[RMDB]
RNA sequence: GGGAACGACUCGAGUAGAGUCGAAAAGUCAAGAUUGCAAUGAAACCAUUGAUCAAUUUGAAAAUGAAAAAGUGACAACACUUUAUGGAACAUGUGGUCACUGUCAUUGCUGUGAUGAAGCCUCUGAAAUUGUUGACUAAUUCGUUAGUCAACAAUUAAAAGAAACAACAACAACAAC
Reactivity to 2A3 in 0.01 (KOAc 150mM, MgCl2 10mM, bicine 150mM(pH8.5), 24C), signal-to-noise 9, nucleotides 027 to 126: g020u020c020a020a010g050a270u100u160g010c010a000a000u010g020a100a040a050c060c010a010u010u020g040a070u100c050a060a080u080u110u230g090a090a070a020a030u070g090a060a080a030a010a000g020u010g010a020c030a260a030c010a090c000u090u130u100a160u200g110g040a090a050c040a070u120g010u010g030g000u000c000a000c020u020g020u050c000a000u000u010g000c010u010g030u020g020a020u030g030a050a010g060c010c010u040c030u050g030a030
Reactivity to DMS in 0.01 (KOAc 150mM, MgCl2 10mM, bicine 150mM(pH8.5), 24C), signal-to-noise 9, nucleotides 027 to 126: g010u000c010a040a070g010a110u020u010g010c000a010a010u000g000a060a140a130c280c020a010u000u000g000a130u010c040a090a110u010u020u010g010a060a100a050a030u010g000a070a080a050a040a010g010u000g000a030c080a050a060c010a030c100u000u010u020a120u030g010g010a090a100c210a100u010g010u000g000g010u000c010a000c010u000g000u000c010a010u000u000g010c010u000g000u000g000a040u000g000a080a130g010c040c020u000c060u000g000a120